An RNA of 177 nucleotides, treated with DMS and 2A3 and read out base by base.
RNA sequence: GGGAACGACUCGAGUAGAGUCGAAAAUCAUAUCUGGCUUUACAUUUGCUCGAUAUUUGUGUAAAGAACUGCGGUUAUCCAUUUCACUUUCAGAUCGCAUCAGAAGAGUUUUUAAAUGGAUUCGUUAGCUUUUAAUCAGUUUCGACUGAUUAAAAGCAAAAGAAACAACAACAACAAC
Reactivity to DMS in 0.01 (KOAc 150mM, MgCl2 10mM, bicine 150mM(pH8.5), 24C), signal-to-noise 4, nucleotides 027 to 126: u000c080a050u010a090u000c010u000g010g010c010u010u010u000a070c120a080u010u020u010g000c050u010c270g030a060u000a030u010u000u010g010u000g010u000a020a040a070g000a090a090c120u000g010c030g020g010u000u020a040u000c000c010a010u000u000u000c300a070c030u000u010u000c040a280g000a030u000c220g000c020a300u000c040a050g000a050a080g000a030g010u000u000u010u010u000a030a010a030u000g010g020a060u000u000c040g000u000u000a220
Reactivity to 2A3 in 0.01 (KOAc 150mM, MgCl2 10mM, bicine 150mM(pH8.5), 24C), signal-to-noise 2, nucleotides 027 to 126: u060c010a010u040a020u040c010u040g030g000c020u100u110u100a080c040a150u140u170u160g020c020u030c050g010a030u030a130u130u120u130g070u000g030u070a020a060a040g030a140a070c030u070g010c020g110g000u100u070a010u030c000c000a010u020u030u050c000a010c020u030u080u040c030a050g010a100u010c030g040c120a060u040c030a030g130a210a000g050a050g040u050u090u050u090u150a040a040a020u020g000g040a030u000u000c010g020u020u070a030

For DMS, 2,254 sequencing reads were counted.